RNA sequence: GGGAACGACUCGAGUAGAGUCGAAAAAAUCCUGAUCUUGAAUAGUCAUUCUUUCCUUAACUACUCUUUCCAUCCUUGAAAGACCUAUUCUAAACUGAUUUUGUAGUAAUUCUCCUACAGAUCUUAAUCUUCUGUUUCCUAAGUGAUCUAUGUCAUAAAAUUAGCUAGGUUUCGACCUAGCUAAUUUAAAAGAAACAACAACAACAAC
Reactivity to 2A3 in 0.01 (KOAc 150mM, MgCl2 10mM, bicine 150mM(pH8.5), 24C), signal-to-noise 3, nucleotides 027 to 156: a000a020u050c030c010u040g030a100u090c060u100u090g030a040a010u020a040g040u030c020a100u130u010c010u030u030u060c000c030u090u140a080a090c030u090a020c030u050c000u060u110u020c060c030a140u100c040c030u040u050g020a030a020a020g010a040c010c010u040a060u090u060c010u040a050a110a120c080u020g000a020u000u140u240u070g010u000a010g000u000a030a110u180u070c100u050c060c000u020a010c000a010g030a010u020c000u010u140a100a060u060c040u150u010c040u060g050u010u020u030c000c010u030a100a120g050u010g050a040u080c040u170a080u300g030u220c240a040u300a100
Reactivity to DMS in 0.01 (KOAc 150mM, MgCl2 10mM, bicine 150mM(pH8.5), 24C), signal-to-noise 1, nucleotides 027 to 156: a090a050u010c010c030u010g000a070u000c080u000u000g030a050a080u000a090g020u000c070a100u000u000c030u010u000u000c010c050u000u000a080a140c040u000a060c050u000c060u000u000u010c030c020a170u000c070c050u000u000g000a130a100a080g010a040c210c000u000a050u000u010c040u000a080a060a120c070u000g010a050u010u010u000u010g000u000a050g030u000a060a110u010u010c050u000c110c000u000a070c030a040g000a000u000c020u000u010a090a080u000c020u000u000c030u000g020u010u000u000c020c000u000a080a160g030u000g010a050u010c060u000a090u000g030u000c000a050u000a070
Description:
Structure probing data (2A3 and DMS) for a 207-nucleotide construct. Reactivities are given for positions 27 through 156. 2A3 adducts were read by reverse transcription with SuperScript II with manganese. The reactions ran in a buffer of 150 mM KOAc, 10 mM MgCl2 and 150 mM bicine (pH 8.5), at 24 C. The 2A3 profile rests on 1,116 reads.